[RMDB]
An RNA of 177 nucleotides, treated with DMS and read out base by base. The RNA was probed in 150 mM KOAc, 10 mM MgCl2 and 150 mM bicine (pH 8.5) at 24 C.

RNA sequence: GGGAACGACUCGAGUAGAGUCGAAAAGAUAUGGAGAUUACGACCCGUUUGCUUUGUUCAACAGCUUGUCACUCGGAAACGAGUGCAAGACAUGAACAAAGCAAACGGGUCGGGGAUCUCCUAAGUCGAAAUCAAAGUAGUUCGCUACUUUGAUUUCAAAAGAAACAACAACAACAAC
Reactivity to DMS in 0.01 (KOAc 150mM, MgCl2 10mM, bicine 150mM(pH8.5), 24C), signal-to-noise 3, nucleotides 027 to 126: g010a130u010a300u010g000g010a040g010a020u000u000a130c000g000a020c000c000c010g030u000u000u000g010c000u000u000u010g000u000u010c000a040a110c300a190g020c010u010u000g000u020c020a020c000u000c000g010g010a160a090a220c000g030a000g030u000g010c000a010a000g000a040c080a200u000g000a010a000c000a010a000a010g000c000a000a000a010c010g020g000g000u000c010g000g000g030g000a010u000c000u000c000c010u010a040a100g010u000c140